[RMDB]
RNA sequence: GGGAACGACUCGAGUAGAGUCGAAAAUGCCGGACACCACUCGCAAGAAAUUGAUGCAAUACUGGGAUAUGAAUACGGCCCGGUUGCCGUUCACCGUGAUGACAUGAUUACCCGUUAAGGAGCAGGCCUAGCUAUGCCAUUUCGAUGGCAUAGCUAGAAAAGAAACAACAACAACAAC
Reactivity to 2A3 in 0.01 (KOAc 150mM, MgCl2 10mM, bicine 150mM(pH8.5), 24C), signal-to-noise 3, nucleotides 027 to 126: u030g030c000c000g030g010a000c000a010c000c000a030c010u040c020g010c070a060a040g070a110a120a020u150u140g060a090u150g040c030a050a060u050a130c030u060g000g030g040a030u070a060u290g130a130a040u130a120c050g040g010c000c030c020g100g000u060u030g030c020c010g030u000u070c040a040c060c010g000u070g060a070u080g030a020c000a050u090g010a100u130u100a110c010c020c000g050u090u050a080a020g060g030a000g020c060a050g040g000c000
Reactivity to DMS in 0.01 (KOAc 150mM, MgCl2 10mM, bicine 150mM(pH8.5), 24C), signal-to-noise 3, nucleotides 027 to 126: u000g020c030c010g020g000a130c080a070c040c010a060c060u000c050g030c100a080a070g020a050a090a070u000u000g020a060u010g020c030a060a060u010a060c040u010g020g010g010a100u000a090u010g010a130a100u010a070c090g000g000c020c060c050g010g020u000u010g040c030c030g000u010u010c060a040c030c050g020u000g000a080u010g000a080c040a040u000g000a070u000u010a110c030c040c010g000u000u010a080a040g010g010a060g000c030a050g000g010c090